[RMDB]
RNA sequence: GGGAACGACUCGAGUAGAGUCGAAAACGCUGGGACCAAACAAGGCUUUUGACGCUGGUACUGAAGCGCGCACGGUAUUUCAGCGAUAAGCCUUGUGGUCCUGUGCUGAAGCGCGCACGGCAACCGAAAGGUGCGAAAAUGAGUAGUUCGCUACUCAGUUAACAGUACGCUUCGGCGUACUGUUAACAAAAGAAACAACAACAACAAC
Reactivity to 2A3 in 0.01 (KOAc 150mM, MgCl2 10mM, bicine 150mM(pH8.5), 24C), signal-to-noise 3, nucleotides 027 to 156: c050g000c030u100g010g000g000a000c000c030a120a220a170c020a020a000g010g000c020u060u050u180u300g210a140c100g000c000u100g140g000u000a000c000u010g100a160a020g000c000g000c010g000c020a030c020g000g000u070a020u000u300u300c010a000g000c000g060a070u080a090a000g000c000c000u010u010g000u000g000g010u010c000c000u010g010u020g000c020u080g020a110a020g010c030g000c000g000c030a010c000g040g000c010a060a120c000c000g010a110a040a060g000g000u040g000c020g020a050a050a020a140u130g000a000g000u000a000g010u060u100c140g020c160u000a000c000u000c000a000